[RMDB]
Structure probing data (DMS and 2A3) for a 207-nucleotide construct. It was measured as part of the RMDB library M2RFOK. For 2A3, 2,084 sequencing reads were counted. The RNA was probed in 150 mM KOAc, 10 mM MgCl2 and 150 mM bicine (pH 8.5) at 24 C. 2A3 adducts were read by reverse transcription with SuperScript II with manganese. For DMS, 3,133 sequencing reads were counted.

RNA sequence: GGGAACGACUCGAGUAGAGUCGAAAACGGUAUUGGUCAAGGCUAUACCGACAGCGCACCUUCAAAAGGGCGCUUAAUCCCCGGCCAAGCGCCGAAAUAUGACUAGACACCGCUGGGCUGGUAGGGCAAAACAUGGCGAUCUUCGGAUCGCCAUGAACCCUUAUAUACUGUUCGCAGUAUAUAAGGGAAAAGAAACAACAACAACAAC
Reactivity to DMS in 0.01 (KOAc 150mM, MgCl2 10mM, bicine 150mM(pH8.5), 24C), signal-to-noise 2, nucleotides 027 to 156: c050g020g030u000a030u000u000g080g040u000c020a100a150g000g000c040u020a070u000a000c010c010g000a120c110a050g010c040g070c000a020c030c000u000u000c090a070a070a190a200g000g030g020c000g040c030u000u010a010a090u000c010c050c000c020g030g020c020c040a040a030g060c050g020c030c040g030a060a130a060u000a110u000g010a120c130u010a170g010a180c050a080c090c020g000c010u000g020g040g010c030u020g000g000u010a040g010g020g050c080a080a060a090a150c000a010u000g020g010c000g020a000u000c020u010u030c300g020g000a020u010c000g000c000c000a000u000g020a040a070
Reactivity to 2A3 in 0.01 (KOAc 150mM, MgCl2 10mM, bicine 150mM(pH8.5), 24C), signal-to-noise 3, nucleotides 027 to 156: c020g000g020u030a020u110u210g080g010u060c070a110a110g090g000c010u010a000u000a010c020c000g010a010c040a010g010c000g010c030a290c110c000u050u090c050a050a140a050a000g010g010g000c000g000c000u000u000a010a010u000c000c000c020c000g010g000c000c010a070a020g070c060g000c070c030g060a040a050a010u230a080u100g060a050c030u050a050g030a030c010a010c040c020g000c020u030g010g020g020c020u000g000g100u080a070g030g020g020c030a030a030a060a030c000a020u000g010g000c010g000a000u000c010u020u020c050g040g000a000u000c000g020c000c000a000u000g000a000a000